[RMDB]
RNA sequence: GGGAACGACUCGAGUAGAGUCGAAAAGACAGUGGCCGAUGGGGACUCUUGAGGGCAAAGUAUGGACUUCCGUCGGCCGAAAGUUGCUCUGGCACCGUGGACAUACUGAAGUGCACCUCGGAGUUCGCGCUAAUAGGCCGUUCGCGGCCUAUUAGCGAAAAGAAACAACAACAACAAC
Reactivity to DMS in 0.01 (KOAc 150mM, MgCl2 10mM, bicine 150mM(pH8.5), 24C), signal-to-noise 1, nucleotides 027 to 126: g010a030c150a070g080u000g020g000c030c000g010a050u000g050g040g000g000a000c010u000c000u010u060g090a090g010g000g000c000a280a210a070g000u000a030u000g010g030a120c040u000u010c070c000g100u000c020g000g000c050c000g040a090a050a160g000u000u050g070c090u000c030u090g000g000c060a120c050c010g000u070g000g110a030c000a000u000a050c000u000g000a140a020g000u040g050c070a140c000c000u000c000g000g020a030g010u000u000c030g010
Reactivity to 2A3 in 0.01 (KOAc 150mM, MgCl2 10mM, bicine 150mM(pH8.5), 24C), signal-to-noise 1, nucleotides 027 to 126: g110a080c140a090g090u070g100g030c000c000g040a030u160g000g020g000g040a000c000u070c030u100u300g000a000g000g070g060c090a080a040a000g000u010a070u020g000g070a090c040u140u040c070c000g050u000c000g020g060c000c000g000a000a000a000g020u030u080g050c000u020c090u020g000g000c050a040c060c020g010u010g000g020a000c000a000u030a000c020u080g070a260a000g070u020g280c010a130c160c000u010c000g000g000a000g030u000u050c030g020